RNA sequence: GGGAACGACUCGAGUAGAGUCGAAAAGAUAUGGAUACAUCUACCCACCUUGCAAGAAGCCAUCGAUCCAGUAAGUUCGGAAACGAACUUACUGGGGAGGCUUCUGCAAGAGGAUGUAUCCUAAGUCGACAGUGAGUAUGUUCGCAUACUCACUGUCAAAAGAAACAACAACAACAAC
Reactivity to DMS in 0.01 (KOAc 150mM, MgCl2 10mM, bicine 150mM(pH8.5), 24C), signal-to-noise 1, nucleotides 027 to 126: g000a150u000a040u000g020g010a010u000a050c000a010u000c000u000a170c020c020c070a300c130c000u010u000g000c000a030a070g050a010a000g000c000c000a300u000c220g010a030u000c000c000a000g010u000a000a010g010u000u000c000g000g000a040a040a130c000g000a020a000c000u000u000a010c000u000g010g000g000g000a000g030g020c000u000u000c000u010g000c010a000a000g010a120g020g000a000u000g010u000a000u000c000c000u010a020a060g010u010c140
Reactivity to 2A3 in 0.01 (KOAc 150mM, MgCl2 10mM, bicine 150mM(pH8.5), 24C), signal-to-noise 2, nucleotides 027 to 126: g150a040u260a100u300g000g000a000u010a020c010a010u010c000u270a300c030c000c000a000c020c000u010u010g060c100a300a290g000a010a000g010c020c000a190u300c120g030a030u030c020c000a010g000u000a000a000g010u000u000c020g040g000a090a040a080c010g010a010a010c000u010u000a000c000u010g000g000g000g010a030g000g010c000u000u000c000u010g010c000a010a000g010a010g020g000a000u010g000u000a010u000c000c000u000a010a020g280u210c150